The record gives the reactivity of an RNA of 177 nucleotides to 2A3.
RNA sequence: GGGAACGACUCGAGUAGAGUCGAAAAGCAGUUGACUUCGGUCAACUGCAAAUAAAGCUCAAGACGUGCACAGGGAGGAACGUCUUGAGCAUCCCAAUAAAAAAACAUGUAAGUUCGCUUACAUGAACUGUUCGGAAAUGUUCGCAUUUCCGAACAGAAAAGAAACAACAACAACAAC
Reactivity to 2A3 in 0.01 (KOAc 150mM, MgCl2 10mM, bicine 150mM(pH8.5), 24C), signal-to-noise 2, nucleotides 027 to 126: g000c000a010g000u000u000g000a020c020u040u050c230g060g030u020c000a010a000c000u000g000c020a000a010a000u000a000a000a000g010c000u000c000a020a000g010a000c020g030u050g050c080a050c110a300g010g200g100a120g060g070a030a000c000g000u000c020u010u000g000a000g020c000a000u010c000c020c040a030a020u030a030a020a000a000a000a000a000c000a000u000g000u000a000a010g000u020u080c230g020c160u010u030a010c030a000u000g010a010a060